Structure probing data (2A3) for a 177-nucleotide construct.
The data come from the RNA Mapping Database (RMDB), library M2PK50.
2A3 adducts were read by reverse transcription with SuperScript II with manganese.
Conditions: 150 mM KOAc, 10 mM MgCl2 and 150 mM bicine (pH 8.5), 24 C.

RNA sequence: GGGAACGACUCGAGUAGAGUCGAAAAUCCGAGAGAUUCGUCUCUCGGAAAAGAUCGUUGUGUACACGAUAGUACAUAUUAAAUUUAAACUAACAAAAUAAAAAACUUACCUAUUCGUAGGUAAGAAUAGGAACAUAGGAUUCGUCCUAUGUUCCUAAAAAGAAACAACAACAACAAC
Reactivity to 2A3 in 0.01 (KOAc 150mM, MgCl2 10mM, bicine 150mM(pH8.5), 24C), signal-to-noise 1, nucleotides 027 to 126: u000c000c000g040a000g100a020g020a000u040u130c080g040u020c060u000c000u040c040g000g070a000a000a000a040g100a130u300c020g000u040u120g020u020g020u060a000c010a000c000g040a000u060a040g040u040a040c020a000u080a170u080u300a060a180a160u160u200u190a160a260a060c000u210a050a050c090a000a030a250a230u300a030a150a060a000a000a000c000u000u020a000c000c000u020a020u000u130c080g160u040a040g020g000u000a000a060g000a020a020